This 207-nucleotide RNA was probed chemically with 2A3. The 2A3 profile rests on 616 reads. Conditions: 150 mM KOAc, 10 mM MgCl2 and 150 mM bicine (pH 8.5), 24 C.
RNA sequence: GGGAACGACUCGAGUAGAGUCGAAAAGUUAGAAGCAAAGUAAUAUACGAAAUGAUUAAGCUGGUAAAGAGUACUGGCAUGGCUAUAUUACAGCAGCACGCUUUCAGCUAUAUCCUGAAUUCAGGGCACAGGUUCUUUUCGGUUCUUGCCCCAAAAGCCUAUUAAGGCCGUUCGCGGCCUUAAUAGGAAAAGAAACAACAACAACAAC
Reactivity to 2A3 in 0.01 (KOAc 150mM, MgCl2 10mM, bicine 150mM(pH8.5), 24C), signal-to-noise 1, nucleotides 027 to 156: g020u000u040a060g000a060a020g010c020a040a120a030g000u010a010a050u050a020u010a040c020g040a080a040a170u150g050a050u170u070a060a030g020c020u000g010g020u090a150a110a050g230a120g190u040a050c010u060g010g000c020a080u090g030g000c020u020a020u010a000u100u090a030c000a010g030c030a010g030c040a020c090g020c020u100u130u060c030a000g050c020u070a090u020a020u300c020c000u040g020a070a010u070u230c140a070g010g000g000c030a050c020a020g000g090u000u050c010u040u110u040u080c030g020g000u000u000c020u000u060g020c090c000c010c000a000a100a050a000g030